RNA sequence: GGGAACGACUCGAGUAGAGUCGAAAAAACGAUCACGGACCCAGCCACGCAGACUUCGGUGAAACCAGUGGCGUCCAGCCGGGUGGUGGGGGACAGCGCAGCCUCACCUGCAGGAGCAUCACCAGGCAUCCUGCUCUACGUUCGCGUAGAGCAGGAUAAAAGAAACAACAACAACAAC
Reactivity to DMS in 0.01 (KOAc 150mM, MgCl2 10mM, bicine 150mM(pH8.5), 24C), signal-to-noise 1, nucleotides 027 to 126: a100a080c090g000a050u000c080a060c070g000g040a130c090c040c040a100g030c050c050a080c010g020c200a070g010a080c080u000u000c110g030g040u010g000a140a100a140c060c070a130g000u010g000g010c100g000u000c080c050a110g020c000c090g010g020g010u010g020g060u000g000g000g000g000g000a110c190a050g010c040g020c040a090g020c070c000u000c040a110c080c030u020g020c030a040g000g000a090g000c050a060u000c030a050c100c020a110g000g000c090
Source information: An RNA of 177 nucleotides, treated with DMS and read out base by base. Reactivities are given for positions 27 through 126. The RNA was probed in 150 mM KOAc, 10 mM MgCl2 and 150 mM bicine (pH 8.5) at 24 C.